Description:
An RNA of 177 nucleotides, treated with 2A3 and DMS and read out base by base. Reactivities are given for positions 27 through 126. The RNA was probed in 150 mM KOAc, 10 mM MgCl2 and 150 mM bicine (pH 8.5) at 24 C. High 2A3 reactivity points to a flexible backbone, as in loops and unpaired stretches.
[RMDB]
RNA sequence: GGGAACGACUCGAGUAGAGUCGAAAAGUUGAAACUGUUGAUUAUCUACCUGGGGAUGAAGCGGGGAUUAAAAGUGUAACAUUGCUCAUCAAAGGGCAUAAUGCUUAUGGUUAUUUAAAAGCUGAAAGUGAACACAAAGAUUCGUCUUUGUGUUCACAAAAGAAACAACAACAACAAC
Reactivity to 2A3 in 0.01 (KOAc 150mM, MgCl2 10mM, bicine 150mM(pH8.5), 24C), signal-to-noise 1, nucleotides 027 to 126: g000u020u060g000a080a020a020c050u060g000u000u000g000a140u050u050a070u120c070u000a120c010c000u000g020g010g020g020a150u090g080a050a000g010c020g000g000g070g000a090u030u030a060a000a060a000g070u050g080u220a040a000c010a090u000u000g000c000u000c030a240u080c000a120a080a030g010g000g020c000a030u030a090a040u080g000c000u030u140a090u260g010g060u060u060a140u000u110u050a240a150a000a000g000c010u100g070a080a010a010
Reactivity to DMS in 0.01 (KOAc 150mM, MgCl2 10mM, bicine 150mM(pH8.5), 24C), signal-to-noise 2, nucleotides 027 to 126: g010u010u000g000a150a080a060c160u000g000u010u010g030a120u020u000a090u000c040u000a030c100c030u050g020g000g010g020a050u010g000a020a060g000c110g010g010g000g000a030u020u010a040a030a110a060g010u020g000u000a050a060c080a120u000u010g000c000u000c040a080u030c300a050a130a140g000g010g000c060a110u050a060a080u030g000c090u000u000a050u020g000g000u000u010a040u030u020u000a080a060a080a070g000c050u010g000a030a130a190